[RMDB]
The record gives the reactivity of an RNA of 177 nucleotides to 2A3.
RNA sequence: GGGAACGACUCGAGUAGAGUCGAAAAGAUUGCCCCGAUGUCCAACCAGAAGAAGUGAAACUGCUGCUGGGUCUGGAGAGGUGAAGACCCGUGGCCAGCUUCUGUUGUUGCCAUCGGCCAUUGCUUUUGAUUCUGCACCGUUCGCGGUGCAGAAUCAAAAAGAAACAACAACAACAAC
Reactivity to 2A3 in 0.01 (KOAc 150mM, MgCl2 10mM, bicine 150mM(pH8.5), 24C), signal-to-noise 1, nucleotides 027 to 126: g090a070u180u120g050c000c000c000c000g000a070u100g000u070c010c000a000a040c010c010a020g000a040a030g000a080a000g050u010g220a060a280a160c080u060g000c000u000g000c000u010g040g040g040u000c010u200g220g010a160g020a090g050g120u130g020a050a000g010a020c000c000c020g000u070g000g000c100c020a000g000c000u020u030c000u010g120u160u100g000u000u000g000c000c000a000u000c040g000g040c060c020a100u040u110g000c080u000u000u000
Values cover nucleotides 27 to 126.